[RMDB]
RNA sequence: GGGAACGACUCGAGUAGAGUCGAAAAUCGAUGUCGGCAUGGCAGGCAUCAGGAAGGAAUUCGACAACCCGAACGUCAAUCGUACCUCCAUCGGCGCGGCCAUGAUGCUCAACAUCUCGCCGUAUUCACCAGAAGCCAAUGUCCGCGAAAUCCAGUGGUCUAUCUAGGAAUUCGUUCCUAGAUAGACAAAAGAAACAACAACAACAAC
Reactivity to 2A3 in 0.01 (KOAc 150mM, MgCl2 10mM, bicine 150mM(pH8.5), 24C), signal-to-noise 7, nucleotides 027 to 156: u100c040g030a040u070g070u110c020g000g040c060a050u060g050g000c030a030g030g010c010a050u020c060a080g050g030a050a100g030g030a040a080u100u100c080g030a030c030a090a090c050c050c050g050a070a030c040g050u050c040a020a070u050c040g030u060a080c000c010u030c020c010a060u100c050g040g000c020g000c000g040g000c000c020a020u090g010a000u030g000c020u050c200a100a150c020a100u030c010u020c030g010c010c000g010u040a150u070u130c060a050c060c010a040g040a120a010g010c000c000a030a080u060g030u030c010c010g000c020g040a020a030a030u060c030c030a090g100u180g110
Reactivity to DMS in 0.01 (KOAc 150mM, MgCl2 10mM, bicine 150mM(pH8.5), 24C), signal-to-noise 3, nucleotides 027 to 156: u010c040g000a040u020g040u000c020g010g080c010a120u020g020g000c040a100g000g000c080a040u010c020a180g020g010a160a060g020g020a050a170u010u000c020g030a060c040a120a090c030c050c050g010a150a080c020g020u010c060a040a120u000c060g020u010a200c020c020u010c030c070a140u000c100g010g030c080g000c040g010g000c030c070a090u000g020a030u000g020c080u020c210a070a120c060a030u000c020u010c090g000c000c000g020u000a110u010u020c060a130c030c020a130g000a100a140g010c020c050a030a070u000g000u010c020c010g000c040g000a080a060a110u010c010c030a080g030u010g010